[RMDB]
RNA sequence: GGGAACGACUCGAGUAGAGUCGAAAAGUCGUAACGUCUCUUGCUUCUGGUAUGCCUGUAUGGAUGGUUGCUAUCCAGCAGGGAGGGCAGAUUAAGGAUUCUUUCGGCGGGAUCGGCAACACGUUUAAGGUAUUGCUCAGUUAUAUUAAUCCGGUCAACUAGGAAUGUGAUUCGUCACAUUCCUAGUAAAAGAAACAACAACAACAAC
Reactivity to DMS in 0.01 (KOAc 150mM, MgCl2 10mM, bicine 150mM(pH8.5), 24C), signal-to-noise 1, nucleotides 027 to 156: g020u000c020g010u020a070a090c080g040u000c000u000c010u000u010g030c030u000u000c040u000g020g040u000a060u010g020c060c010u010g020u000a150u000g010g030a080u000g000g030u000u010g000c000u000a000u000c020c000a000g020c040a040g020g010g010a050g010g000g020c020a080g010a120u020u000a120a100g010g000a160u000u000c010u000u000u000c050g000g000c070g020g000g020a030u010c050g000g040c020a020a020c000a070c060g010u000u000u000a060a100g000g020u000a020u000u000g020c000u010c060a140g020u000u010a130u000a090u000u010a060a180u010c030c030g000g000u000c040a190
Reactivity to 2A3 in 0.01 (KOAc 150mM, MgCl2 10mM, bicine 150mM(pH8.5), 24C), signal-to-noise 4, nucleotides 027 to 156: g070u060c060g010u020a100a030c040g050u000c000u000c000u020u060g080c050u020u050c030u030g050g030u140a060u050g060c030c000u030g040u150a210u050g070g040a030u050g130g010u060u020g010c020u020a020u000c000c000a020g000c000a010g030g010g020a010g000g000g000c020a010g030a110u140u180a060a040g060g000a050u040u000c000u030u080u030c030g050g000c030g000g010g000a000u050c040g020g010c020a020a030c050a030c040g020u030u060u090a060a050g060g010u050a070u100u050g020c020u020c130a030g020u110u030a040u010a040u180u210a110a060u030c040c020g060g060u080c040a010

About this RNA:
This 207-nucleotide RNA was probed chemically with DMS and 2A3. Conditions: 150 mM KOAc, 10 mM MgCl2 and 150 mM bicine (pH 8.5), 24 C. Source: RMDB library OK3TST, as collected in RNAgym. 2A3 adducts were read by reverse transcription with SuperScript II with manganese. DMS adducts were read by reverse transcription with MarathonRT.